RNA sequence: GGGAACGACUCGAGUAGAGUCGAAAAGAUCUGCGCCGAUCCGAAACGCUAGCAAACAGCCCGCAUCAUGUCGUCUCCUAACUUCGACGUGGUGAAAUACUGAGCUUAUGCGAGAAAGCCUGUUAGCAAUAGAUCAGAACGUUCGCGUUCUGAUCAACACUCAUUGACUCUUCGGAGUCAAUGAGUGAAAAGAAACAACAACAACAAC
Reactivity to DMS in 0.01 (KOAc 150mM, MgCl2 10mM, bicine 150mM(pH8.5), 24C), signal-to-noise 2, nucleotides 027 to 156: g000a070u000c040u000g000c100g100c030c050g000a080u020c030c060g000a090a090a060c040g000c030u000a050g020c020a050a050a180c190a090g000c040c010c000g050c020a020u000c000a040u000g000u000c000g000u000c120u000c070c130u000a110a080c090u000u000c000g000a020c000g040u000g040g020u000g000a040a090a100u010a160c060u010g020a110g050c070u000u010a230u000g000c030g000a100g000a080a060a110g040c020c030u010g000u000u000a070g000c040a050a100u010a070g000a030u000c010a020g010a050a020c000g040u000u000c300g020c050g120u000u010c010u000g000a010u000c010a050a180
Reactivity to 2A3 in 0.01 (KOAc 150mM, MgCl2 10mM, bicine 150mM(pH8.5), 24C), signal-to-noise 4, nucleotides 027 to 156: g030a020u010c030u100g060c020g010c040c030g020a050u020c010c010g030a040a040a030c080g000c050u080a020g010c070a100a050a140c030a040g030c020c020c010g030c010a010u010c000a000u000g000u010c000g020u010c060u060c090c130u150a160a190c050u050u040c020g000a010c000g010u000g000g000u010g020a000a030a020u210a040c040u020g010a010g010c010u090u100a040u190g040c040g030a040g060a090a050a000g000c000c060u070g020u130u100a040g030c020a080a140u060a160g010a000u000c000a000g000a000a000c010g010u050u050c170g020c000g140u000u000c020u000g000a000u000c000a000a000

The data come from the RNA Mapping Database (RMDB), library M2RFPK. The record gives the reactivity of an RNA of 207 nucleotides to DMS and 2A3. For DMS, 2,388 sequencing reads were counted. Values cover nucleotides 27 to 156. Reactivities are rounded to 0.1 and cut off at 0 and 3. The reactions ran in a buffer of 150 mM KOAc, 10 mM MgCl2 and 150 mM bicine (pH 8.5), at 24 C.